RNA sequence: GGGAACGACUCGAGUAGAGUCGAAAAUGACGGUUGUAUGAUGAAUAAUAAUUCCACGGUCACGCAAAAUUUCAACCACAUCACGGUAGCUUAAUGAGAAUCUAAAAUAGUAGCCAACGGCUACCAACACAGUUUUGUUAUUCGUAACAAAACUGUGAAAAGAAACAACAACAACAAC
Reactivity to 2A3 in 0.01 (KOAc 150mM, MgCl2 10mM, bicine 150mM(pH8.5), 24C), signal-to-noise 3, nucleotides 027 to 126: u080g030a040c080g020g020u050u050g060u090a100u080g070a040u040g050a110a030u130a120a020u090a030a090u070u030c010c000a030c030g030g000u040c010a010c020g050c040a060a050a080a030u040u180u060c000a040a020c020c000a020c010a080u120c050a030c060g020g000u000a010g020c010u050u090a090a050u290g040a080g050a160a060u040c040u090a060a070a090a110u140a130g080u020a020g040c020c000a030a050c040g030g020c000u000a000c000c010a000a020
Reactivity to DMS in 0.01 (KOAc 150mM, MgCl2 10mM, bicine 150mM(pH8.5), 24C), signal-to-noise 4, nucleotides 027 to 126: u010g010a130c090g020g030u000u000g020u010a070u010g010a110u010g010a110a080u010a080a110u010a100a190u010u010c010c040a050c060g000g010u000c050a040c100g010c110a060a040a110a100u010u000u000c070a040a070c070c030a070c150a070u000c070a080c120g000g000u000a040g000c010u000u000a080a070u000g020a090g000a070a100u010c080u000a040a050a060a080u000a070g010u010a050g020c040c020a080a110c210g010g000c000u000a010c000c060a070a210

The record gives the reactivity of an RNA of 177 nucleotides to 2A3 and DMS. Reactivities are given for positions 27 through 126. 2A3 is a SHAPE reagent: it acylates the 2'-hydroxyl of flexible nucleotides of all four kinds. It was measured as part of the RMDB library OK2TST. For DMS, 3,748 sequencing reads were counted.